[RMDB]
RNA sequence: GGGAACGACUCGAGUAGAGUCGAAAAAAACUUUUGUGACUUGCUGAAACGGAACUAAUCUCCUCACCGAGGCUAAGCAAGUAAAAUACGCCUCUCAUAUCCUUACCUGAGGGUGGUAAGGAAAUAACCUGCAACGCUUCCUUCGGGAAGCGUUGAACAAGGAACAUAACUUCGGUUAUGUUCCUUGAAAAGAAACAACAACAACAAC
Reactivity to DMS in 0.01 (KOAc 150mM, MgCl2 10mM, bicine 150mM(pH8.5), 24C), signal-to-noise 2, nucleotides 027 to 156: a060a050a060c030u000u000u000u010g040u000g020a160c010u010u000g000c010u000g030a040a120a100c040g000g000a060a210c050u010a100a120u010c080u000c000c010u010c090a160c030c060g000a030g020g060c040u020a140a050g010c040a040a010g000u010a070a050a080a060u000a040c020g000c020c020u000c020u000c100a100u000a140u000c000c020u000u010a050c020c020u000g030a140g030g030g050u010g000g000u000a000a020g000g010a010a020a050u010a060a080c080c040u010g020c000a010a020c010g010c060u020u000c000c020u010u010c300g040g050g000a020a000g020c000g010u030u000g000a020a090
Reactivity to 2A3 in 0.01 (KOAc 150mM, MgCl2 10mM, bicine 150mM(pH8.5), 24C), signal-to-noise 4, nucleotides 027 to 156: a000a010a000c100u120u070u070u120g060u050g050a030c000u010u020g000c030u060g020a090a060a060c060g030g020a000a030c030u070a100a140u070c040u010c070c020u040c030a040c020c060g000a010g020g030c020u040a030a010g010c010a020a000g030u100a010a050a010a000u110a020c020g010c020c000u020c000u010c040a040u030a060u170c000c000u000u000a000c000c000u050g040a100g030g080g000u050g000g000u000a000a000g000g000a000a000a010u030a000a020c020c040u050g000c020a000a000c000g000c010u000u000c010c000u030u050c170g050g000g000a000a000g000c000g000u000u000g000a000a000